[RMDB]
RNA sequence: GGGAACGACUCGAGUAGAGUCGAAAAGAACGAAAGAAAGAAAUCUGACAGAAUGACGGAUUCGAUCGUUGUGGUCGGCGGGCCACCACGUCAUUCCUUCGCACUGUCUCCGGGCAGACCGCCAUAAAAAAGCGGAUCUACUUCGGUAGAUCCGCAACACUCCCACAUUGUUCGCAAUGUGGGAGUGAAAAGAAACAACAACAACAAC
Reactivity to 2A3 in 0.01 (KOAc 150mM, MgCl2 10mM, bicine 150mM(pH8.5), 24C), signal-to-noise 3, nucleotides 027 to 156: g030a040a010c020g000a030a030a080g080a020a110a040g070a040a130a040u080c070u080g010a040c020a080g150a150a170u100g030a030c030g000g030a020u050u110c090g040a060u150c030g010u020u020g000u000g000g020u010c040g030g070c060g040g020g010c010c000a000c010c010a000c020g000u010c010a030u030u030c010c000u050u050c020g010c040a020c050u000g000u030c020u030c040c040g050g010g010c030a020g040a130c050c020g010c020c020a090u260a030a110a010a010a030a000g000c000g000g010a000u000c000u000a000c000u010u030c160g000g000u010a010g000a010u010c010c000g000c000a000a000